[RMDB]
RNA sequence: GGGAACGACUCGAGUAGAGUCGAAAAAGAAAUUCAAAUCAUGCAAAUGGUUCGUUUAAUGGAAAAUGGUAAAGAAGUGAAGAUGAGUAAACGUACUGGUAAUGCGAUUACAUUAAGAGAAAUUAUGCACCUCUGUGGUAUUCGUACCACAGAGGUGAAAAGAAACAACAACAACAAC
Reactivity to DMS in 0.01 (KOAc 150mM, MgCl2 10mM, bicine 150mM(pH8.5), 24C), signal-to-noise 2, nucleotides 027 to 126: a030g020a010a150a080u030u010c040a080a030a140u000c020a010u000g000c190a020a070a050u000g000g010u000u000c050g000u010u060u060a080a030u000g000g020a020a110a120a170u010g030g020u000a180a030a100g060a050a040g000u000g010a120a040g060a010u000g000a100g000u000a020a010a010c080g040u010a040c010u010g040g000u000a030a210u020g050c110g010a070u010u000a020c030a050u060u010a010a040g000a070g030a060a080a100u050u040a070u000g000
Reactivity to 2A3 in 0.01 (KOAc 150mM, MgCl2 10mM, bicine 150mM(pH8.5), 24C), signal-to-noise 2, nucleotides 027 to 126: a000g120a040a110a040u220u180c070a150a010a000u090c000a030u040g070c090a050a060a060u040g000g090u000u000c040g090u020u080u140a120a110u040g040g180a060a000a000a000u020g060g010u090a120a170a070g110a090a000g020u020g030a040a000g020a050u040g010a000g010u080a020a020a020c030g080u020a000c180u060g110g000u140a000a000u030g040c000g000a000u050u030a020c000a000u050u200a130a000g080a000g030a000a050a090u220u200a120u190g000